[RMDB]
RNA sequence: GGGAACGACUCGAGUAGAGUCGAAAAAAAACCUGUAGUGUGUGCCUUCAUCAUCUUCUGGUGAUUAAAGAUGGACACGGAUGGACAGUGCUGUCCUGGGGGAGAAAUCCUAGAUGAGGGUUGGAUGAUUACUUCAUUCAGUCAUUUGCCUGGUGGAUGUCUACUGUUGAUUCGUCAACAGUAGACAAAAAGAAACAACAACAACAAC
Reactivity to 2A3 in 0.01 (KOAc 150mM, MgCl2 10mM, bicine 150mM(pH8.5), 24C), signal-to-noise 2, nucleotides 027 to 156: a000a070a000a000c120c000u130g010u100a200g020u010g000u000g060u090g190c030c000u060u030c020a020u000c010a030u020c050u300u040c050u300g000g010u020g020a040u090u110a050a050a030g040a040u070g020g010a030c040a010c040g040g020a120u100g040g000a000c000a030g100u130g190c090u070g050u000c000c030u030g030g000g050g000g000a100g130a010a040a010u020c020c010u030a070g020a090u070g020a040g060g000g010u000u020g050g010a010u010g000a010u030u070a070c080u130u040c000a030u010u090c020a030g030u030c000a080u050u060u150g030c050c020u060g020g050u080g050g050a070
Reactivity to DMS in 0.01 (KOAc 150mM, MgCl2 10mM, bicine 150mM(pH8.5), 24C), signal-to-noise 1, nucleotides 027 to 156: a030a040a060a040c000c000u010g050u000a160g000u010g060u030g000u000g030c010c000u010u000c000a030u010c020a050u010c040u000u010c120u000g080g100u000g010a090u010u000a060a040a060g000a100u000g000g000a090c070a060c030g000g000a080u000g040g020a130c040a120g030u000g020c080u010g010u010c000c010u000g000g000g020g060g000a190g010a070a070a090u000c020c020u010a090g020a070u000g000a060g000g010g010u000u000g000g010a010u000g010a050u020u000a110c150u020u000c040a020u000u000c030a030g000u010c020a120u000u000u000g000c010c030u000g000g020u000g000g010a190